[RMDB]
RNA sequence: GGGAACGACUCGAGUAGAGUCGAAAAGAUAUGGAAAGAACUUCGCUUGGAUUUAUACAGCGAAACAUAUCGGAAACGAUAUGUAGUAGCUGUAUUGUCAGCGAAGAUCUUUCCUAAGUCAAACGAGUUUGGAUCAGUUCGCUGAUCCAAACUCGAACUCCGUCAAAGUGUUCGCACUUUGACGGAGAAAAGAAACAACAACAACAAC
Reactivity to 2A3 in 0.01 (KOAc 150mM, MgCl2 10mM, bicine 150mM(pH8.5), 24C), signal-to-noise 1, nucleotides 027 to 156: g010a040u060a070u160g000g000a040a010a010g020a090a080c010u000u000c000g010c040u100u160g060g010a010u140u300u060a010u020a000c000a000g010c000g010a010a000a010c000a000u010a000u000c000g000g070a040a130a000c020g000a000u000a000u010g010u000a010g010u000a010g000c060u000g000u000a000u000u010g000u000c000a010g000c000g010a000a000g000a010u000c000u010u000u020c000c000u000a060a000g030u020c020a040a040a060c000g000a010g010u030u000u010g030g000a000u000c000a010g070u120u140c200g050c150u000g000a000u000c000c000a010a000a000c000u000c000g000a000a000